[RMDB]
RNA sequence: GGGAACGACUCGAGUAGAGUCGAAAAAUGACGAGAGAAGGGAGAAUCCCGACAAUGGAAAAUAUGACCGCAGCUCUAAAAAACGGGAUAAUAUCAGAGAAGGAACACGACAGGAUAAGUACAAUAACGAUAGUGAACCAUUCGUGGUUCACUAUCGAAAAGAAACAACAACAACAAC
Reactivity to DMS in 0.01 (KOAc 150mM, MgCl2 10mM, bicine 150mM(pH8.5), 24C), signal-to-noise 2, nucleotides 027 to 126: a090u040g040a070c030g010a070g000a060g000a090a040g010g020g020a170g030a130a070u000c010c010c010g000a130c120a080a140u020g000g000a060a080a120a070u000a060u000g000a100c100c070g000c090a060g010c090u000c000u020a000a040a090a080a060a040c060g000g000g000a080u020a060a100u010a020u000c080a090g010a050g000a040a040g010g000a060a050c100a060c130g010a050c130a080g000g020a070u000a040a080g020u000a070c120a030a060u030a050a170
Reactivity to 2A3 in 0.01 (KOAc 150mM, MgCl2 10mM, bicine 150mM(pH8.5), 24C), signal-to-noise 1, nucleotides 027 to 126: a000u050g020a010c020g000a000g000a000g000a050a100g050g010g000a020g020a070a000u050c010c020c020g000a000c020a010a070u070g020g100a050a080a030a080u210a030u120g010a030c030c100g070c040a010g000c000u040c000u170a030a050a050a020a070a060c030g000g010g030a020u020a020a050u090a060u060c010a000g070a000g020a120a010g030g000a090a000c010a010c020g110a020c010a000g030g010a010u030a190a160g070u100a060c020a090a040u130a160a000

This 177-nucleotide RNA was probed chemically with DMS and 2A3.
The RNA was probed in 150 mM KOAc, 10 mM MgCl2 and 150 mM bicine (pH 8.5) at 24 C.
The data come from the RNA Mapping Database (RMDB), library OK2TRN.